[RMDB]
RNA sequence: GGGAACGACUCGAGUAGAGUCGAAAAGUGAGUCCCCCGGGCCGGGUUCGGUGGAACUGUAAGGGGACGGCGGGUUAAUAGACAAUGACCACGUUCGGAUCGCGCAGAGCCGAUAGUAUGUGCUCACUAGGGAUACUAUGUUCGCAUAGUAUCCCUAAAAAGAAACAACAACAACAAC
Reactivity to DMS in 0.01 (KOAc 150mM, MgCl2 10mM, bicine 150mM(pH8.5), 24C), signal-to-noise 5, nucleotides 027 to 126: g020u040g010a110g010u000c020c010c010c020c030g020g010g010c100c050g010g000g020u020u010c030g000g030u020g020g010a050a030c070u000g010u040a120a150g000g010g030g030a090c030g000g010c060g000g020g000u000u020a090a080u060a090g020a140c270a090a110u020g000a040c010c030a110c050g000u000u020c010g020g010a090u010c050g000c100g000c010a050g010a100g020c020c020g010a070u010a050g000u020a060u010g000u010g010c010u000c030a070c180
Reactivity to 2A3 in 0.01 (KOAc 150mM, MgCl2 10mM, bicine 150mM(pH8.5), 24C), signal-to-noise 2, nucleotides 027 to 126: g070u050g020a010g060u070c000c020c010c000c010g060g110g000c060c070g110g020g000u050u100c020g020g030u050g060g080a120a040c010u030g000u080a080a100g080g000g000g030a010c010g000g000c040g000g000g010u070u080a110a060u080a160g160a030c080a070a080u070g020a010c000c000a150c050g010u140u220c010g010g040a070u040c040g000c010g000c130a040g000a010g050c000c010g020a050u020a040g090u060a080u190g060u120g020c010u010c000a020c020